RNA sequence: GGGAACGACUCGAGUAGAGUCGAAAAGAUAUGGACGUCUUCAUCGAAGCGGCAUGUCGGAAACGACAUGCGCUGACGAAGUGACGGGACGUCCUAAGUCAAAACGUCGACCGUUCGCGGUCGACGAGAUUCGGGGGAAGUUCGCUUCCCCCGAAUCAAAAGAAACAACAACAACAAC
Reactivity to DMS in 0.01 (KOAc 150mM, MgCl2 10mM, bicine 150mM(pH8.5), 24C), signal-to-noise 1, nucleotides 027 to 126: g010a010u000a270u020g000g010a040c020g020u000c000u000u020c050a070u000c010g000a300a070g020c000g020g030c000a010u000g000u000c010g030g010a000a020a040c000g000a000c020a000u000g000c000g020c010u000g000a190c280g000a100a140g000u010g000a040c300g010g000g000a000c010g020u000c000c000u000a000a030g010u000c000a070a100a170a190c030g000u000c000g000a030c000c000g070u010u040c270g010c000g040g010u000c010g000a010c000g040a020
Reactivity to 2A3 in 0.01 (KOAc 150mM, MgCl2 10mM, bicine 150mM(pH8.5), 24C), signal-to-noise 1, nucleotides 027 to 126: g050a000u020a000u170g000g000a000c000g000u030c010u270u100c230a100u100c040g040a080a000g070c080g210g060c040a010u010g000u010c000g010g000a020a030a020c030g000a000c020a020u010g000c040g000c020u030g070a120c070g150a210a150g110u080g160a010c190g000g030g010a000c010g040u020c000c000u030a020a030g040u030c030a030a010a090a130c010g000u000c000g000a000c000c010g060u080u150c300g000c030g080g050u000c000g000a000c000g000a060